The record gives the reactivity of an RNA of 177 nucleotides to DMS. For DMS, 664 sequencing reads were counted. It was measured as part of the RMDB library TTRDEL.
RNA sequence: GGGAACGACUCGAGUAGAGUCGAAAAGAUAUGGACCUUGACGAAGGAUGAACUACGGUGUCGGAAACGACACCCGCAUCUGGAAAGGUCCUAAGUCAAAACCCCACCCGCUUCGGCGGGUGGGGAAGUAUCUUACGCUCUUCGGAGCGUAAGAUACAAAAGAAACAACAACAACAAC
Reactivity to DMS in 0.01 (KOAc 150mM, MgCl2 10mM, bicine 150mM(pH8.5), 24C), signal-to-noise 1, nucleotides 027 to 126: g020a030u000a300u000g000g030a010c000c000u000u010g000a250c160g040a270a140g010g000a010u000g000a150a150c170u000a040c300g010g010u000g000u000c000g020g000a050a120a120c040g030a010c000a000c040c010c100g010c000a020u000c000u000g000g010a060a040a000g000g020u000c040c000u000a010a050g020u000c030a100a080a060a150c030c030c020c000a000c000c000c010g000c020u000u000c170g030g000c010g000g000g070u000g000g000g000g000a000a000